RNA sequence: GGGAACGACUCGAGUAGAGUCGAAAAGCUUCCGUCGAACGCGAAAGUCGGACGGCGGCCAUGAGUCGCAACGCAAAGCCGCGGCAUGUGGAGUUAGCGAGAAGAGACUAGGCUUUGGUUUCUUCAAAUUAGUGAGUGUGGUUCGCCACACUCACAACUAUACUCACUCGUUCGCGAGUGAGUAUAGAAAAGAAACAACAACAACAAC
Reactivity to DMS in 0.01 (KOAc 150mM, MgCl2 10mM, bicine 150mM(pH8.5), 24C), signal-to-noise 3, nucleotides 027 to 156: g010c010u000u000c010c000g020u000c000g010a060a130c090g010c030g030a170a120a240g030u000c020g010g010a240c020g010g020c080g010g000c030c020a080u000g000a090g050u000c010g000c020a020a090c030g010c030a130a120a240g030c000c010g040c010g010g000c030a130u000g030u000g010g000a150g020u000u000a110g010c030g020a210g000a040a050g010a090g000a030c030u000a080g020g010c080u000u000u000g010g000u000u000u000c000u000u000c030a090a070a180u000u000a130g010u010g010a020g010u000g010u000g000g010u000u000c230g010c020c010a000c010a010c000u000c000a000c000a020a100
Reactivity to 2A3 in 0.01 (KOAc 150mM, MgCl2 10mM, bicine 150mM(pH8.5), 24C), signal-to-noise 5, nucleotides 027 to 156: g000c010u060u030c000c000g010u000c000g010a060a030c000g020c020g110a300a120a050g190u300c020g010g010a010c010g000g010c010g000g000c000c010a050u070g020a020g000u020c000g010c020a060a060c070g030c090a100a100a090g040c060c040g000c020g010g000c030a050u080g020u030g020g020a080g030u100u100a050g080c090g020a050g040a150a030g050a020g010a030c030u040a010g040g060c020u040u020u020g050g000u010u000u010c000u020u010c030a040a070a160u130u070a050g000u000g000a000g000u000g000u010g030g020u030u080c190g020c060c000a000c000a000c000u000c000a000c000a000a000